The data come from the RNA Mapping Database (RMDB), library OK2TRN. Chemical mapping of a 177-nucleotide RNA with DMS and 2A3. The reactions ran in a buffer of 150 mM KOAc, 10 mM MgCl2 and 150 mM bicine (pH 8.5), at 24 C. High 2A3 reactivity points to a flexible backbone, as in loops and unpaired stretches.
RNA sequence: GGGAACGACUCGAGUAGAGUCGAAAAAGGGGCUAGCAACCCCUACCACGGGCACGCUAGGUAAUACCCAUAACAUCGAGUCGAUGGUGGUGUCAGCGAAAACAGGCGCCACAGCUGCUGUGCGUACCGCGUAACACAGGUUCGCCUGUGUUACGCGAAAAGAAACAACAACAACAAC
Reactivity to DMS in 0.01 (KOAc 150mM, MgCl2 10mM, bicine 150mM(pH8.5), 24C), signal-to-noise 2, nucleotides 027 to 126: a030g000g020g000g030c000u010a100g000c110a090a300c140c000c000c000u000a040c040c120a130c300g020g000g000c050a050c250g020c010u000a050g000g020u000a030a120u010a200c020c030c030a180u000a080a100c180a120u010c000g000a080g000u040c050g000a030u000g000g010u000g010g010u000g030u000c030a020g020c060g010a090a020a170a170c110a030g000g000c030g000c020c010a030c010a150g000c070u000g000c020u000g010u000g000c070g000u000a060c240
Reactivity to 2A3 in 0.01 (KOAc 150mM, MgCl2 10mM, bicine 150mM(pH8.5), 24C), signal-to-noise 1, nucleotides 027 to 126: a000g000g000g030g030c000u020a010g040c030a050a080c010c030c020c000u030a070c000c040a030c050g010g000g030c040a020c030g030c040u040a030g000g040u060a070a070u110a280c030c010c010a040u040a060a020c040a050u030c060g030a030g120u070c040g020a080u020g100g000u010g010g030u030g000u000c040a030g070c060g120a050a100a050a000c010a070g020g000c000g000c000c000a000c000a010g000c040u070g000c010u030g010u050g020c050g040u030a100c040